[RMDB]
RNA sequence: GGGAACGACUCGAGUAGAGUCGAAAAUAUGUAACUAGUCAUGAUAUGUUAUAGUACACCGCGUGGCAUAUAUCGAUACUGUGACGUACGUCGACUAACACUGGUGCACUGAUGCGCGUGCGUACAUCGGUCAUGCGGUGCGCCAGCAUCAUGUGCGGAUGUGCAUGCGAUUCGUCGCAUGCACAUCAAAAGAAACAACAACAACAAC
Reactivity to 2A3 in 0.01 (KOAc 150mM, MgCl2 10mM, bicine 150mM(pH8.5), 24C), signal-to-noise 3, nucleotides 027 to 156: u300a090u110g110u050a090a020c060u040a070g030u040c060a030u120g120a150u090a020u070g000u060u030a050u000a030g010u020a010c050a060c030c020g080c040g000u060g090g000c130a050u170a010u060a050u300c080g020a030u040a110c010u040g030u030g100a000c040g010u030a000c000g050u040c200g050a060c010u020a120a030c090a060c180u190g050g110u180g040c000a010c040u020g000a040u040g000c090g000c040g030u150g000c000g000u030a050c000a070u130c080g040g030u070c000a040u100g080c020g000g000u000g000c000g020c000c000a000g000c000a020u000c000a000u300g010u000g000c050g030